[RMDB]
RNA sequence: GGGAACGACUCGAGUAGAGUCGAAAACACCAUUCCUCUCUAUGACUUAGAUGUUACUCAUCUUGUUGCUAGAAGGCAGUCAGGCAGUGGAAAAUAUCAUCUUUGAGACCAUACAAACAUCAUGGUUCUGACCUAAGUGGAUUAAGAUGGGUGAUUGGGCGGUAUACGUGUUCGCACGUAUACCGCCAAAAGAAACAACAACAACAAC
Reactivity to 2A3 in 0.01 (KOAc 150mM, MgCl2 10mM, bicine 150mM(pH8.5), 24C), signal-to-noise 1, nucleotides 027 to 156: c070a000c010c030a180u050u000c010c010u020c040u000c060u070a140u120g050a050c040u080u000a010g040a050u130g040u010u240a110c100u120c010a000u000c020u000u040g050u010u030g040c000u000a010g000a100a040g200g000c020a000g000u000c000a000g000g030c000a030g000u130g000g250a020a020a020a010u300a030u100c000a000u070c030u120u040u020g100a090g020a080c030c000a000u090a110c280a120a180a080c050a090u300c050a030u040g070g000u140u000c090u000g100a180c000c000u100a160a100g000u110g130g040a020u150u190a020a020g000a000u120g040g000g000u010g000a040u000u070g080
Source information
Structure probing data (2A3) for a 207-nucleotide construct. It was measured as part of the RMDB library OK3TST. The RNA was probed in 150 mM KOAc, 10 mM MgCl2 and 150 mM bicine (pH 8.5) at 24 C.